[RMDB]
RNA sequence: GGGAACGACUCGAGUAGAGUCGAAAACAAUAUGAUGUUUCAGUCUUACGCGCUGUUUCCGCAUAUGACCGUGGAACAGAACAUCGCUUUUGGCCUGAAACAGGACAAACUACCGAAAGCGGAAAUAUAGCUAUAGUGAUUUCGAUCACUAUAGCUAAAAAGAAACAACAACAACAAC
Reactivity to DMS in 0.01 (KOAc 150mM, MgCl2 10mM, bicine 150mM(pH8.5), 24C), signal-to-noise 7, nucleotides 027 to 126: c060a110a100u020a090u000g010a110u010g010u000u000u010c000a040g010u010c020u000u000a080c290g010c080g010c050u000g000u000u010u010c010c000g010c040a160u000a090u000g000a090c240c150g000u010g010g020a030a030c030a040g000a090a080c160a120u020c020g010c010u000u000u000u000g010g010c090c030u010g000a030a020a040c040a050g010g010a130c140a070a080a090c140u010a140c030c010g000a030a060a060g010c040g000g010a060a100a070u000a140
Reactivity to 2A3 in 0.01 (KOAc 150mM, MgCl2 10mM, bicine 150mM(pH8.5), 24C), signal-to-noise 8, nucleotides 027 to 126: c020a040a070u160a130u280g150a050u050g020u010u010u010c010a010g010u000c020u050u060a020c050g000c010g000c020u000g030u020u100u020c000c000g000c030a070u140a190u240g160a110c090c070g050u080g020g000a020a010c000a020g020a040a030c040a130u150c020g010c010u040u040u040u070g030g000c010c030u010g020a050a030a020c020a000g000g020a020c060a070a160a040c050u110a100c040c020g060a190a100a010g120c040g040g100a010a080a000u240a010